[RMDB]
RNA sequence: GGGAACGACUCGAGUAGAGUCGAAAAUAUGUCAGAUGUGCUAAUCCAUUGGUUACAAGUAGCAUUUCCAACGUUAUUGAAAAUGAAUUCUCCACCCUUUACAUAAAGGUGAGUUUCAGCACCGCCACUCGACCAGUUAACGGCAUCCAUUCCAGUAUGAAAGGAACUCAUUCGUGAGUUCCUUUCAAAAAGAAACAACAACAACAAC
Reactivity to 2A3 in 0.01 (KOAc 150mM, MgCl2 10mM, bicine 150mM(pH8.5), 24C), signal-to-noise 2, nucleotides 027 to 156: u170a030u070g020u050c010a030g020a080u010g000u020g000c000u030a080a020u070c020c080a070u060u130g070g030u080u160a070c010a020a050g060u040a020g060c000a010u010u020u030c020c000a050a060c090g070u070u060a100u050u140g100a010a010a030a110u070g010a020a040u110u040c010u030c000c000a020c000c020c000u000u020u120a110c100a160u210a090a010a000g000g030u030g010a000g000u000u070u010c010a000g000c010a010c040c040g020c010c000a030c030u060c010g100a040c020c030a020g010u040u030a040a090c040g000g010c000a030u000c020c050a000u040u070c050c080a090g150u300a110
Reactivity to DMS in 0.01 (KOAc 150mM, MgCl2 10mM, bicine 150mM(pH8.5), 24C), signal-to-noise 2, nucleotides 027 to 156: u000a080u000g000u000c060a120g030a060u000g030u000g030c030u000a020a070u000c000c060a190u010u000g050g010u000u000a120c060a010a090g010u000a050g030c010a070u000u000u000c040c030a030a080c080g030u010u000a090u000u000g010a060a020a110a110u010g030a030a090u000u000c030u010c060c010a080c020c010c000u000u000u020a110c180a130u000a020a050a030g010g040u000g010a140g000u020u010u000c010a050g000c050a080c020c030g000c020c030a040c040u000c020g010a040c000c040a110g000u010u010a080a080c070g000g030c030a030u000c010c010a220u000u010c000c100a160g020u010a090